[RMDB]
Structure probing data (DMS) for a 177-nucleotide construct.
RNA sequence: GGGAACGACUCGAGUAGAGUCGAAAAGUUUUUAACGCGUGUGCACCCGCUAACACGAAUUACCCAGUUAUUUUCGACUUUACUCGAGUCGUUAUAGCGUGACUUGGCGGAGUUCUCCGCGAAAUAAUCUUACCAUCGAAUUCGUUCGAUGGUAAGAAAAAGAAACAACAACAACAAC
Reactivity to DMS in 0.01 (KOAc 150mM, MgCl2 10mM, bicine 150mM(pH8.5), 24C), signal-to-noise 1, nucleotides 027 to 126: g010u000u000u000u000u000a040a100c050g000c040g000u000g000u000g030c080a090c090c050c060g020c040u010a090a040c040a050c040g000a070a070u010u010a120c090c030c040a110g010u000u000a090u000u010u000u000c000g010a030c000u000u010u000a010c000u000c020g010a000g010u000c000g000u010u000a010u010a080g020c040g010u000g010a090c080u000u010g010g040c020g030g000a090g010u000u000c110u000c050c010g020c040g000a050a010a050u020a070a130

Conditions: 150 mM KOAc, 10 mM MgCl2 and 150 mM bicine (pH 8.5), 24 C. The DMS profile rests on 1,048 reads. Source: RMDB library M2PK90, as collected in RNAgym.